The record gives the reactivity of an RNA of 177 nucleotides to 2A3 and DMS.

RNA sequence: GGGAACGACUCGAGUAGAGUCGAAAAAUGCACUGGUUCGCCAGUGCAUGAUUACCGAGAAAGUACCUCGGAAUAAAAGUGCAACCCUUGGAAACAAGGGAAUUCCGAACCGAUUCGUCGGUUCGAACCGUAUAGGGUCUUUCGAGACCCUAUACGGAAAAGAAACAACAACAACAAC
Reactivity to 2A3 in 0.01 (KOAc 150mM, MgCl2 10mM, bicine 150mM(pH8.5), 24C), signal-to-noise 1, nucleotides 027 to 126: a000u010g000c000a010c000u000g010g030u020u020c120g080c080c000a000g000u000g000c010a000u000g000a000u000u060a070c000c010g000a020g030a020a130a010g060u060a060c020c000u010c010g000g060a000a000u080a020a030a020a000g110u080g050c020a110a190c000c000c020u010u010g040g000a050a020a020c030a010a000g000g010g040a000a010u050u010c060c010g000a010a000c000c000g000a010u030u060c170g030u000c010g030g020u000u010c000g000a010a010
Reactivity to DMS in 0.01 (KOAc 150mM, MgCl2 10mM, bicine 150mM(pH8.5), 24C), signal-to-noise 2, nucleotides 027 to 126: a000u000g000c000a010c000u000g020g000u000u040c190g020c000c000a020g000u000g000c000a000u000g000a150u020u000a280c020c000g020a020g010a100a110a160g010u010a100c050c020u000c000g000g000a110a070u000a030a040a030a080g030u000g000c160a120a190c010c000c000u000u000g000g010a200a110a170c000a010a000g000g000g000a040a040u000u000c090c010g000a020a000c000c000g000a030u000u000c110g020u000c000g010g020u000u000c000g000a040a060
Description
For DMS the reverse transcriptase was MarathonRT. The reactions ran in a buffer of 150 mM KOAc, 10 mM MgCl2 and 150 mM bicine (pH 8.5), at 24 C.